[RMDB]
RNA sequence: GGGAACGACUCGAGUAGAGUCGAAAAGGUGUGUAUCGCACGGUUCGACCAGUGGGAGAAGGCUCCGGUCGAUUGCUCUAUUGGUUUGGGCUGUGUCCUGGUUGCGCGCUGAGGGUAUGACCAUUGGCUAAAUAUUAUAUUUCGAUAUAAUAUUUAGAAAAGAAACAACAACAACAAC
Reactivity to DMS in 0.01 (KOAc 150mM, MgCl2 10mM, bicine 150mM(pH8.5), 24C), signal-to-noise 5, nucleotides 027 to 126: g010g000u000g020u000g020u010a040u010c060g000c020a040c040g020g000u010u010c020g010a040c000c010a050g020u000g000g010g010a050g010a120a140g000g000c010u010c160c120g000g010u010c010g000a070u050u040g000c010u000c020u020a040u010u000g000g000u010u010u030g030g000g000c020u010g020u010g000u020c050c060u010g010g010u010u010g020c050g000c040g010c020u000g010a090g010g010g000u010a050u010g000a110c030c030a110u010u030g010g010
Reactivity to 2A3 in 0.01 (KOAc 150mM, MgCl2 10mM, bicine 150mM(pH8.5), 24C), signal-to-noise 4, nucleotides 027 to 126: g040g010u030g000u020g000u040a050u110c040g000c010a000c000g010g020u020u020c000g010a010c000c010a010g010u030g030g040g010a020g010a060a030g030g000c000u010c020c050g090g000u000c000g020a070u010u130g020c000u000c000u020a020u020u040g020g000u030u040u160g010g000g000c000u010g010u000g010u030c000c010u020g040g000u040u040g010c010g000c000g000c010u010g010a040g050g040g010u050a050u100g050a030c000c010a050u020u070g030g000

This 177-nucleotide RNA was probed chemically with DMS and 2A3. Conditions: 150 mM KOAc, 10 mM MgCl2 and 150 mM bicine (pH 8.5), 24 C. For 2A3, 5,459 sequencing reads were counted. The data come from the RNA Mapping Database (RMDB), library OK1LIB. For DMS, 15,673 sequencing reads were counted.